[RMDB]
RNA sequence: GGGAACGACUCGAGUAGAGUCGAAAAAAAACCACUCUGCUGUGGCCUAUGGCUUUUCAUUCCUAUGUGAUUGCUGUCCCAAACUCAUGUAGGGCUAAAAGCCAUGGGCUACAGUGAGGGGCAAAAAGAUGAUCAUUAUGUUCGCAUAAUGAUCAUCAAAAGAAACAACAACAACAAC
Reactivity to 2A3 in 0.01 (KOAc 150mM, MgCl2 10mM, bicine 150mM(pH8.5), 24C), signal-to-noise 2, nucleotides 027 to 126: a000a000a000a000c010c000a030c010u030c030u070g030c000u000g000u000g010g010c000c000u000a000u000g000g000c000u000u010u030u030c040a040u040u050c000c000u010a010u000g030u000g000a030u040u080g040c110u130g110u140c000c000c030a040a030a010c010u000c000a010u010g000u020a000g000g000g020c020u010a000a000a010a020g010c000c000a000u000g010g000g000c000u000a000c000a000g000u010g000a000g000g010g000g010c050a050a060a010a020a130
Reactivity to DMS in 0.01 (KOAc 150mM, MgCl2 10mM, bicine 150mM(pH8.5), 24C), signal-to-noise 3, nucleotides 027 to 126: a030a060a070a070c010c000a040c010u000c010u010g060c000u010g000u000g000g020c000c000u000a010u010g000g010c000u000u000u010u010c200a070u000u000c010c010u000a010u010g010u000g000a040u000u000g030c110u010g010u010c020c010c000a080a050a070c100u000c000a010u000g010u000a000g000g020g000c160u000a030a010a010a010g010c000c010a000u000g010g000g010c000u000a000c010a000g000u000g010a010g000g010g000g010c170a020a060a070a060a050

Background
This 177-nucleotide RNA was probed chemically with 2A3 and DMS. For DMS the reverse transcriptase was MarathonRT. Source: RMDB library RFMREP, as collected in RNAgym. Conditions: 150 mM KOAc, 10 mM MgCl2 and 150 mM bicine (pH 8.5), 24 C.